Source information
Chemical mapping of a 207-nucleotide RNA with 2A3. Source: RMDB library M2RFOK, as collected in RNAgym. Conditions: 150 mM KOAc, 10 mM MgCl2 and 150 mM bicine (pH 8.5), 24 C. The 2A3 profile rests on 1,193 reads.

[RMDB]
RNA sequence: GGGAACGACUCGAGUAGAGUCGAAAAAACGUUGCAUGAUCGUAAAACAUGCCCGGCUUACCGUGAGCCGCCUUUGAAAGAAAGGUUUACACGGACUCUGUUGCGUUACGCACGUACUUAACUUGUGAAAACGGCAUCUUGUUCGCAAGAUGCCGAAGUAGCCUGUUAGGUUCGCCUAACAGGCUACAAAAGAAACAACAACAACAAC
Reactivity to 2A3 in 0.01 (KOAc 150mM, MgCl2 10mM, bicine 150mM(pH8.5), 24C), signal-to-noise 2, nucleotides 027 to 156: a000a000c000g000u030u000g010c000a000u000g010a040u120c010g030u110a060a040a020a080c010a000u010g010c000c000c000g010g030c000u020u080a160c000c010g000u000g010a020g030c000c000g010c000c000u020u000u000g060a070a020a000g050a000a000a000g000g020u000u020u040a020c010a000c000g000g030a020c060u080c040u130g210u220u030g010c040g050u110u070a060c110g020c020a000c010g020u050a040c010u090u050a180a040c020u120u080g060u060g160a050a030a030a040c030g000g000c000a010u000c000u030u040g010u080u080c140g010c130a000a000g000a000u000g000c000c000g000a000a000